[RMDB]
RNA sequence: GGGAACGACUCGAGUAGAGUCGAAAAGAAACAACUGAAGCUUCAACGCCUUUUUUUCCAAUCUUCUCUAGCACCGGGCUAGGGAGUAAGCCCGUGGAACCUUAGUUUUGUUCCCUCGGGACUUACUUGUGGUUCCUGUGGUGCACUCCUGACCCUGACAGAGGAGAUCUUUCGAGAUCUCCUCUGUAAAAGAAACAACAACAACAAC
Reactivity to 2A3 in 0.01 (KOAc 150mM, MgCl2 10mM, bicine 150mM(pH8.5), 24C), signal-to-noise 2, nucleotides 027 to 156: g020a000a060a020c040a000a000c090u060g020a140a000g040c010u250u230c160a100a020c030g040c020c000u010u010u170u070u020u130u080c040c020a110a140u030c040u100u020c000u030c000u040a030g100c030a050c050c070g000g000g000c050u030a090g000g020g000a000g010u010a100a000g010c000c000c000g080u080g010g010a000a010c000c000u010u010a030g030u180u100u060u080g140u210u030c000c020c020u060c110g030g000g010a010c000u000u000a000c010u020u050g060u100g090g000u010u030c000c000u070g150u280g050g100u110g010c060a020c020u020c000c000u040g050a070c040c040c020u000g050

This 207-nucleotide RNA was probed chemically with 2A3. High 2A3 reactivity points to a flexible backbone, as in loops and unpaired stretches. The reactions ran in a buffer of 150 mM KOAc, 10 mM MgCl2 and 150 mM bicine (pH 8.5), at 24 C.